[RMDB]
RNA sequence: GGGAACGACUCGAGUAGAGUCGAAAAUGGGUUCGUUUGAUUGCGCACCGAGUGGCUCAAAGUUUCCGUCUGAUGGUGGGAGUGCAGGAUUAUGGCAAUUAUGUGAAUCAUAUGCGACGUCAUCAUCCGACCGAAACAAUUUCGAUUGUUUCGGUCGAAAAGAAACAACAACAACAAC
Reactivity to 2A3 in 0.01 (KOAc 150mM, MgCl2 10mM, bicine 150mM(pH8.5), 24C), signal-to-noise 2, nucleotides 027 to 126: u130g030g060g000u080u110c050g000u000u100u080g160a180u080u180g080c120g000c000a010c070c060g020a040g010u060g020g000c000u000c000a110a080a020g000u000u020u010c010c010g080u000c050u080g000a030u030g030g070u000g010g060g070a160g050u040g050c020a000g000g160a050u030u060a050u130g160g000c000a050a050u210u030a050u150g110u100g140a090a020u140c000a030u070a040u210g000c060g040a020c100g040u020c000a050u020c000a000u000c000
Reactivity to DMS in 0.01 (KOAc 150mM, MgCl2 10mM, bicine 150mM(pH8.5), 24C), signal-to-noise 2, nucleotides 027 to 126: u010g000g010g020u010u000c040g040u010u000u000g030a120u000u000g010c090g020c060a050c100c060g010a090g010u010g000g000c050u000c040a070a030a080g010u000u000u000c010c020g010u020c130u000g030a060u000g020g020u010g010g000g000a100g020u010g030c050a070g000g010a060u000u000a100u010g000g010c050a070a100u020u000a080u000g030u000g020a080a090u040c020a060u000a060u000g010c110g020a060c030g000u010c040a030u000c060a050u020c070